The record gives the reactivity of an RNA of 177 nucleotides to DMS and 2A3.
RNA sequence: GGGAACGACUCGAGUAGAGUCGAAAAUAGCUACAUAUGUUCCAUAACAGACGUCCACUUUUUGAUGAAAAGGUGGACACUACAUCACCAAUACAAGUUUAAUGGCUACAUACGGCACUCAGUUUACCAUUGGACAUAAGUUCGCUUAUGUCCAAUGAAAAGAAACAACAACAACAAC
Reactivity to DMS in 0.01 (KOAc 150mM, MgCl2 10mM, bicine 150mM(pH8.5), 24C), signal-to-noise 5, nucleotides 027 to 126: u010a090g000c030u000a100c110a090u000a040u000g010u000u000c020c020a060u010a060a060c100a090g010a130c210g020u000c000c000a010c000u010u010u000u000u000g010a170u010g000a060a020a010a010g000g020u000g000g010a010c010a040c090u000a070c130a070u010c090a080c100c090a040a060u020a080c170a070a080g000u000u010u000a100a070u000g010g000c100u000a040c060a060u000a040c070g010g010c040a070c060u010c080a080g010u010u000u000a090c160
Reactivity to 2A3 in 0.01 (KOAc 150mM, MgCl2 10mM, bicine 150mM(pH8.5), 24C), signal-to-noise 4, nucleotides 027 to 126: u050a000g010c020u050a030c050a070u090a010u050g030u020u030c020c000a010u060a060a030c020a030g110a100c060g010u000c000c010a000c010u040u030u030u040u120g300a300u150g080a030a020a000a010g010g000u000g000g010a000c000a000c000u000a000c000a050u060c020a020c060c040a060a040u120a150c050a110a050g030u020u070u110a130a050u050g040g010c050u010a000c010a020u050a040c050g010g000c010a010c050u060c030a080g010u030u070u050a070c040
The data come from the RNA Mapping Database (RMDB), library RFMREP. Reactivities are given for positions 27 through 126.